[RMDB]
RNA sequence: GGGAACGACUCGAGUAGAGUCGAAAACACAACUGAAUGCAGUGGUUGACUUGCAGGACAGAAACACUGAACUGUCAUAUCAGCUUUUGCUUGAUUCUCUGGGAGACAGAAGCAGAUACUUCAGCAUGUGGAAUCAGGCUGUGGACAGCUAUGAUCCUGGUUCAUGACAUUUCGAUGUCAUGAACCAAAAAGAAACAACAACAACAAC
Reactivity to 2A3 in 0.01 (KOAc 150mM, MgCl2 10mM, bicine 150mM(pH8.5), 24C), signal-to-noise 2, nucleotides 027 to 156: c100a030c030a050a090c030u050g000a070a100u090g000c020a010g010u050g040g000u040u030g030a070c050u020u050g000c010a030g020g020a000c010a050g060a140a160a000c040a020c120u050g050a070a040c010u040g010u110c050a000u060a050u020c040a020g010c010u030u040u170u130g030c000u000u060g030a050u160u000c060u000c090u110g090g010g000a070g010a040c020a080g010a010a010g000c000a010g050a150u060a070c060u020u070c010a030g000c010a040u100g060u050g040g010a010a040u060c000a000g020g000c020u030g030u070g050g060a050c010a000g000c000u050a060u120g000a030u000c050c070
Reactivity to DMS in 0.01 (KOAc 150mM, MgCl2 10mM, bicine 150mM(pH8.5), 24C), signal-to-noise 1, nucleotides 027 to 156: c090a120c050a090a090c030u020g030a100a150u020g030c010a090g010u010g000g000u000u010g010a050c050u000u020g000c000a080g020g040a240c030a050g010a120a060a120c110a090c050u020g010a070a240c010u010g000u000c030a130u000a050u000c010a050g050c000u010u010u000u000g020c000u000u000g090a120u010u010c050u000c110u010g090g000g000a130g020a130c080a070g000a050a120g000c050a030g010a070u000a040c030u000u000c050a020g010c020a090u010g050u000g010g010a070a020u020c000a050g010g000c040u000g000u000g030g000a140c030a040g030c110u000a070u020g000a030u010c030c050
This 207-nucleotide RNA was probed chemically with 2A3 and DMS. Values cover nucleotides 27 to 156. The reactions ran in a buffer of 150 mM KOAc, 10 mM MgCl2 and 150 mM bicine (pH 8.5), at 24 C.